Chemical mapping of a 177-nucleotide RNA with DMS. The DMS profile rests on 700 reads. Conditions: 150 mM KOAc, 10 mM MgCl2 and 150 mM bicine (pH 8.5), 24 C. For DMS the reverse transcriptase was MarathonRT.

[RMDB]
RNA sequence: GGGAACGACUCGAGUAGAGUCGAAAACAGUAGCAGUAGACAUCAGAGCUCACUCUACUCACCACAGCUGGAGCAUCAGGAUCUAGUUGGAAAUCCGAAUGUGAUGCUCUCCGACGGCUACGAGUAAGCACCUCAGUAGUUUCGACUACUGAGGUGCAAAAGAAACAACAACAACAAC
Reactivity to DMS in 0.01 (KOAc 150mM, MgCl2 10mM, bicine 150mM(pH8.5), 24C), signal-to-noise 1, nucleotides 027 to 126: c100a090g010u010a030g030c120a120g030u000a040g000a090c080a110u000c110a030g000a070g000c050u000c040a030c010u000c050u000a080c010u000c080a170c070c060a250c100a100g020c050u000g010g000a030g000c030a130u000c050a140g000g000a040u000c000u000a050g000u000u000g090g000a040a060a040u000c010c020g000a200a070u000g030u000g000a040u000g010c010u000c010u000c170c140g000a080c100g010g000c000u000a010c010g010a160g040u030a090a080